[RMDB]
RNA sequence: GGGAACGACUCGAGUAGAGUCGAAAAGAUAUGGAGCUAGGCUGGCUGGUAUCUAAGGGAGACCAUAUGUCGGAAACGACAUCUGGUCGAAGAACUUAGAGUACCAGCCAGCCUAGCUCCUAAGUCACUUACAUGUUGUCUUCGGACAACAUGUAAGAAAAGAAACAACAACAACAAC
Reactivity to DMS in 0.01 (KOAc 150mM, MgCl2 10mM, bicine 150mM(pH8.5), 24C), signal-to-noise 1, nucleotides 027 to 126: g000a070u000a300u020g000g010a000g040c020u010a010g000g010c000u000g000g030c000u020g000g000u010a090u000c000u010a030a020g000g010g010a110g020a040c000c000a010u010a040u000g000u010c000g010g000a190a070a220c030g010a040c000a030u000c070u020g000g000u000c000g010a120a150g030a190a180c010u000u020a000g000a040g020u020a010c000c000a020g010c020c000a000g000c010c000u010a000g020c010u000c000c000u000a000a010g000u000c030a250
The record gives the reactivity of an RNA of 177 nucleotides to DMS. Source: RMDB library TTRINS, as collected in RNAgym. For DMS the reverse transcriptase was MarathonRT. The RNA was probed in 150 mM KOAc, 10 mM MgCl2 and 150 mM bicine (pH 8.5) at 24 C.